Conditions: 150 mM KOAc, 10 mM MgCl2 and 150 mM bicine (pH 8.5), 24 C. Chemical mapping of a 177-nucleotide RNA with DMS and 2A3. It was measured as part of the RMDB library OK1LIB. For DMS the reverse transcriptase was MarathonRT.
RNA sequence: GGGAACGACUCGAGUAGAGUCGAAAAAGCUUAGGGUUUGGACUCCAUUACCUUAUGAGUGAGAAAGACAGGUAAUGGGAAAGAAAGUCGAAACUCACUCAUGGAAAAUAAACAAACCGAUAUGCGAGGGUUUACUAUAGUUCGCUAUAGUAAACCCAAAAGAAACAACAACAACAAC
Reactivity to DMS in 0.01 (KOAc 150mM, MgCl2 10mM, bicine 150mM(pH8.5), 24C), signal-to-noise 2, nucleotides 027 to 126: a150g020c050u000u010a070g000g000g000u000u000u020g000g010a170c090u010c030c040a000u000u000a010c030c010u000u010a040u000g000a020g030u000g000a000g000a070a130a220g000a050c050a080g050g030u000a080a030u010g020g000g020a030a050a090g020a090a160a050g000u020c000g010a140a090a130c020u000c000a000c020u000c000a020u000g000g000a110a050a070a060u050a090a110a110c020a000a000a000c010c000g020a150u010a060u030g000c010g000a240
Reactivity to 2A3 in 0.01 (KOAc 150mM, MgCl2 10mM, bicine 150mM(pH8.5), 24C), signal-to-noise 6, nucleotides 027 to 126: a010g040c050u070u060a050g000g030g040u010u010u000g020g000a040c020u020c060c000a020u010u030a060c010c000u100u130a050u090g010a000g040u020g020a010g020a060a210a010g060a020c010a010g000g030u060a070a040u060g010g050g090a020a080a000g110a050a070a000g010u020c020g040a070a050a050c010u000c000a000c000u020c010a030u040g070g030a100a100a030a090u190a030a090a030c020a000a010a010c000c010g080a120u040a030u170g020c010g020a110